[RMDB]
RNA sequence: GGGAACGACUCGAGUAGAGUCGAAAACAGAACUGGAUGGGCCGUGUGCUUAACCAGGACAAGAUCUCCUUCUCUCCAACGUUGUUGCCAACUCAUGUUUCUCCUAACCUGUGCUUGGAGAGACGUGCUACCAUAUAGGUGUUCGCACCUAUAUGAAGACCUACAUGAGUUUCGACUCAUGUAGGUCAAAAGAAACAACAACAACAAC
Reactivity to 2A3 in 0.01 (KOAc 150mM, MgCl2 10mM, bicine 150mM(pH8.5), 24C), signal-to-noise 1, nucleotides 027 to 156: c120a000g000a040a070c000u000g010g030a000u100g040g120g050c100c040g120u120g210u300g090c010u070u070a150a090c060c000a010g040g070a040c070a250a000g040a210u000c010u040c010c000u110u070c010u020c020u070c060c060a130a030c110g000u020u010g000u050u050g090c000c010a080a120c040u040c040a030u100g010u000u040u000c000u020c030c000u100a050a070c000c140u300g090u230g120c070u040u060g000g000a000g000a000g020a000c010g000u000g040c010u060a120c040c000a000u030a000u000a000g030g000u000g000u010u050c060g010c070a000c000c000u000a000u000a000u000g000a000a000
An RNA of 207 nucleotides, treated with 2A3 and read out base by base. The reactions ran in a buffer of 150 mM KOAc, 10 mM MgCl2 and 150 mM bicine (pH 8.5), at 24 C.